[RMDB]
RNA sequence: GGGAACGACUCGAGUAGAGUCGAAAAUAGUGGUUCUGCCCAUUGUCUACCUGAUCAGAGCACUGUAACCAGCUGGCCUCCAAAUAAUGACCAAGUAAACUUUUCAUGUCCUUUUUUCUUUUCUGUGGUGGCUUUCUAUUUAGGUGAAAUAUAAAAAGAUUUAUACUCGAUUCGUCGAGUAUAAAUCAAAAGAAACAACAACAACAAC
Reactivity to 2A3 in 0.01 (KOAc 150mM, MgCl2 10mM, bicine 150mM(pH8.5), 24C), signal-to-noise 2, nucleotides 027 to 156: u090a000g040u010g030g030u060u020c050u070g060c020c010c000a030u030u070g020u040c050u050a100c030c040u000g000a040u050c000a010g030a010g110c000a000c010u030g010u070a090a040c040c000a010g010c010u040g030g000c000c000u000c000c020a040a040a000u100a030a030u090g020a030c000c030a030a010g050u050a080a070a100c040u080u090u100u120c060a040u030g070u100c050c030u040u070u040u040u100u200c000u120u070u030u030c040u050g000u020g000g000u000g000g000c000u040u080u040c060u070a070u040u120u050a000g000g000u040g070a020a060a060u210a030u180a020a030a190a000a050
Reactivity to DMS in 0.01 (KOAc 150mM, MgCl2 10mM, bicine 150mM(pH8.5), 24C), signal-to-noise 1, nucleotides 027 to 156: u010a100g060u000g000g010u010u010c070u000g000c030c020c050a260u040u020g020u000c030u000a090c070c020u000g030a110u010c070a130g010a090g000c040a120c050u000g050u010a080a100c020c020a080g010c060u010g040g000c010c000u000c010c060a050a010a110u000a080a100u010g000a080c020c000a030a190g020u000a080a090a100c010u000u010u010u020c050a050u010g000u000c010c010u000u000u000u000u000u000c020u000u020u000u000c050u000g020u000g000g050u000g010g000c040u030u010u010c020u000a070u010u000u000a030g000g000u000g010a070a060a080u000a130u030a030a050a080a110a270

An RNA of 207 nucleotides, treated with 2A3 and DMS and read out base by base. For DMS, 1,828 sequencing reads were counted. Conditions: 150 mM KOAc, 10 mM MgCl2 and 150 mM bicine (pH 8.5), 24 C.